Conditions: 150 mM KOAc, 10 mM MgCl2 and 150 mM bicine (pH 8.5), 24 C. Structure probing data (DMS and 2A3) for a 177-nucleotide construct. As a SHAPE reagent, 2A3 marks flexible, mostly unpaired nucleotides at the ribose 2'-OH. 2A3 adducts were read by reverse transcription with SuperScript II with manganese.
[RMDB]
RNA sequence: GGGAACGACUCGAGUAGAGUCGAAAAGUAUCCAUGUUCGCAUGGAUACGAAAUAUGCGCGCGUAUAUCCGGUUGGCAGGAUGCGCGCGUCUGGCUGGCCGGUGGUGCUAGUCUUCGGACUAGCAAAAUCACGUUUAGCAUUCGUGCUAAACGUGAUAAAAGAAACAACAACAACAAC
Reactivity to DMS in 0.01 (KOAc 150mM, MgCl2 10mM, bicine 150mM(pH8.5), 24C), signal-to-noise 2, nucleotides 027 to 126: g000u000a000u010c000c000a010u000g000u000u010c200g030c010a010u010g000g000a000u000a010c010g010a080a100a080u000a050u010g010c000g000c000g000c000g000u000a080u020a100u000c000c000g000g020u000u010g020g010c100a140g000g010a020u000g000c000g000c010g010c000g000u000c030u000g010g010c020u000g000g010c020c000g010g020u010g010g020u000g000c000u000a000g000u000c000u000u020c190g010g000a010c000u000a000g010c000a040a040a070
Reactivity to 2A3 in 0.01 (KOAc 150mM, MgCl2 10mM, bicine 150mM(pH8.5), 24C), signal-to-noise 2, nucleotides 027 to 126: g000u000a010u000c000c000a000u000g040u030u060c240g000c130a010u000g000g000a000u000a000c000g010a020a010a010u200a100u100g000c020g000c010g000c010g040u040a100u040a060u290c010c020g030g090u090u120g170g030c230a180g060g070a010u010g000c000g000c000g000c000g010u000c000u020g100g030c000u000g010g020c000c000g000g020u040g070g030u070g010c000u000a010g010u000c030u020u040c270g130g000a010c010u000a010g000c000a000a090a000